[RMDB]
RNA sequence: GGGAACGACUCGAGUAGAGUCGAAAAGGAACCGCGGGGGAGGCAUAGGAAAAGGCAUACUACCUGUGGAAUAGGUGUCUUUGACCUGUAGGCAGAGAGGGCCACAUGUCUUUUAAUCGUCACAGACAACCGAGAGGAUAUUCGUAUCCUCUCGGUUAAAAGAAACAACAACAACAAC
Reactivity to DMS in 0.01 (KOAc 150mM, MgCl2 10mM, bicine 150mM(pH8.5), 24C), signal-to-noise 5, nucleotides 027 to 126: g010g010a110a090c050c070g010c100g010g020g000g020g030a060g000g010c070a050u020a040g010g000a290a020a040a020g000g010c010a010u000a070c030u000a050c300c040u010g000u010g020g010a150a060u010a020g010g000u000g000u000c020u000u000u000g020a130c030c020u000g010u010a070g000g010c040a050g020a120g000a100g010g000g000c030c060a060c090a040u000g000u000c010u000u000u010u000a070a110u000c090g010u000c070a070c120a100g000a110c170
Reactivity to 2A3 in 0.01 (KOAc 150mM, MgCl2 10mM, bicine 150mM(pH8.5), 24C), signal-to-noise 2, nucleotides 027 to 126: g030g020a040a020c010c010g010c020g020g010g010g000g030a010g000g010c050a050u070a070g030g000a020a010a000a020g000g000c010a030u050a150c020u020a030c020c070u170g090u240g120g050a080a050u020a020g000g000u020g020u020c000u000u040u060g140a230c010c010u040g050u110a060g000g060c040a000g050a020g020a020g060g060g000c010c010a020c010a060u090g030u030c000u010u130u030u090a090a090u120c090g090u070c060a050c030a150g100a040c020

An RNA of 177 nucleotides, treated with DMS and 2A3 and read out base by base. For 2A3 the reverse transcriptase was SuperScript II with manganese. DMS adducts were read by reverse transcription with MarathonRT.